[RMDB]
RNA sequence: GGGAACGACUCGAGUAGAGUCGAAAAGAUAUGGAAACAUAAGUAGCAUCCCACACAAGCUUGGACCUACCGGUCGGAAACGACCGUGUAGCUAGCUUGGUGGGAUGCUACUUAUGUUUCCUAAGUCCUAGAUAAUACGCUUCGGCGUAUUAUCUAGAAAAGAAACAACAACAACAAC
Reactivity to DMS in 0.01 (KOAc 150mM, MgCl2 10mM, bicine 150mM(pH8.5), 24C), signal-to-noise 2, nucleotides 027 to 126: g000a080u000a300u000g010g010a030a030a010c000a000u000a020a010g010u000a000g000c010a010u000c000c000c000a000c000a120c000a010a020g000c010u020u010g030g020a130c300c000u000a000c000c040g020g000u000c000g020g000a150a080a280c000g000a010c000c010g020u010g010u000a020g000c000u000a010g000c000u000u000g000g020u000g000g010g000a000u010g000c000u000a000c000u010u000a000u000g000u000u000u000c000c000u000a020a110g020u000c050
The record gives the reactivity of an RNA of 177 nucleotides to DMS.
Reactivities are given for positions 27 through 126.
Source: RMDB library TTRINS, as collected in RNAgym.
Conditions: 150 mM KOAc, 10 mM MgCl2 and 150 mM bicine (pH 8.5), 24 C.
DMS adducts were read by reverse transcription with MarathonRT.